[RMDB]
Annotation
An RNA of 177 nucleotides, treated with DMS and 2A3 and read out base by base.
RNA sequence: GGGAACGACUCGAGUAGAGUCGAAAAGAAAGAACCUCCAGAGGCAGCUGUCAACAUCUGGGCCUGCAGUUGAGGCCAGACAUGGGGAUGGGAGCUUGGCCCACGAUGACUUGGCUCUCUGGGGAAAAUUUGGAGAAGGGUUCGCCCUUCUCCAAAUAAAAGAAACAACAACAACAAC
Reactivity to DMS in 0.01 (KOAc 150mM, MgCl2 10mM, bicine 150mM(pH8.5), 24C), signal-to-noise 2, nucleotides 027 to 126: g000a120a080a130g000a210a250c060c000u000c000c010a000g000a010g000g000c250a080g040c140u000g000u000c100a100a090c010a060u000c030u000g000g000g000c000c000u000g000c050a120g000u040u070g000a110g010g010c000c000a080g030a080c120a170u000g000g010g010g040a110u000g020g000g000a170g000c030u040u030g030g000c000c000c010a030c170g000a010u000g010a060c130u030u000g000g020c000u010c000u010c000u000g000g010g000g010a040a040a040
Reactivity to 2A3 in 0.01 (KOAc 150mM, MgCl2 10mM, bicine 150mM(pH8.5), 24C), signal-to-noise 4, nucleotides 027 to 126: g120a030a100a000g020a060a050c000c000u020c000c000a010g010a000g040g030c300a030g010c120u090g050u050c040a020a030c000a070u000c000u000g000g000g000c010c010u060g020c020a050g000u190u190g090a050g060g120c030c000a040g050a120c070a160u300g060g000g040g020a010u070g030g040g050a070g000c040u110u140g030g000c050c000c000a070c170g030a010u010g010a040c080u110u190g020g010c000u000c000u000c010u010g000g000g010g000a000a050a000

For 2A3 the reverse transcriptase was SuperScript II with manganese. As a SHAPE reagent, 2A3 marks flexible, mostly unpaired nucleotides at the ribose 2'-OH. Conditions: 150 mM KOAc, 10 mM MgCl2 and 150 mM bicine (pH 8.5), 24 C. Source: RMDB library RFM100, as collected in RNAgym.